This 177-nucleotide RNA was probed chemically with DMS and 2A3. 2A3 adducts were read by reverse transcription with SuperScript II with manganese. The RNA was probed in 150 mM KOAc, 10 mM MgCl2 and 150 mM bicine (pH 8.5) at 24 C. For 2A3, 939 sequencing reads were counted. It was measured as part of the RMDB library OK2TST. DMS adducts were read by reverse transcription with MarathonRT. For DMS, 1,477 sequencing reads were counted. Values cover nucleotides 27 to 126.
[RMDB]
RNA sequence: GGGAACGACUCGAGUAGAGUCGAAAAGCGUGCCACGUGUCAACCAGUUGGUCUUCAAGCUCUUCAUUGGACGGUGGACGAUGUUUGUCAGUUGCUCGUUUCAAUGGGCUUGGACAAAUAUGUGCCAUAGUCCUGGGAUGUUCGCAUCCCAGGACUAAAAAGAAACAACAACAACAAC
Reactivity to DMS in 0.01 (KOAc 150mM, MgCl2 10mM, bicine 150mM(pH8.5), 24C), signal-to-noise 1, nucleotides 027 to 126: g030c050g020u000g010c010c040a040c070g030u000g000u010c070a050a150c020c050a110g000u000u010g010g010u010c040u010u030c050a010a110g010c000u020c090u000u010c110a030u000u000g010g000a020c000g020g000u000g020g030a040c030g000a070u010g000u000u000u020g000u000c010a110g010u030u000g010c010u000c030g010u000u000u010c110a030a050u000g010g000g000c010u000u000g010g000a030c080a030a070a030u000a060u000g010u010g000c020c050a120
Reactivity to 2A3 in 0.01 (KOAc 150mM, MgCl2 10mM, bicine 150mM(pH8.5), 24C), signal-to-noise 1, nucleotides 027 to 126: g040c040g020u010g060c030c000a060c070g070u010g010u020c040a090a040c050c000a040g040u040u010g200g000u000c050u050u060c020a010a010g000c000u000c000u300u170c060a000u020u040g010g000a000c000g050g030u080g010g000a020c020g010a030u060g180u150u200u230g090u100c120a100g000u070u010g040c020u060c150g050u020u160u110c040a040a050u070g010g000g000c000u010u050g050g010a020c030a000a070a000u230a030u080g060u050g050c050c010a060